RNA sequence: GGGAACGACUCGAGUAGAGUCGAAAAACUUCAUGGGUCUUAGCUUUAUCGUUGAUUCUCACUUUGAGGCUGACAACGCUUUGAUCCUUGAAAAGAAAGUCAUUGGUGACAUCGCUGACGCUGAACCACUUCGUACAAAAACGUACAAUGAGGACAGGCCAUCACAACCCUUCGGGGUUGUGAUGGCAAAAGAAACAACAACAACAAC
Reactivity to 2A3 in 0.01 (KOAc 150mM, MgCl2 10mM, bicine 150mM(pH8.5), 24C), signal-to-noise 2, nucleotides 027 to 156: a000c030u040u010c000a030u030g000g010g020u000c000u000u000a000g010c000u020u100u100a080u170c040g050u030u030g070a130u190u060c010u010c020a110c120u170u140u280g020a020g000g020c050u040g000a020c010a020a020c060g000c020u030u000u030g000a000u000c000c000u000u000g020a000a000a020a000g060a050a060a000g060u040c010a030u030u030g010g000u030g030a020c010a060u050c040g000c030u030g030a020c040g010c010u020g030a030a050c010c000a010c020u070u060c030g000u060a050c040a030a120a110a030a030c060g000u020a000c040a010a050u100g010a030g020g050a000c020a020g000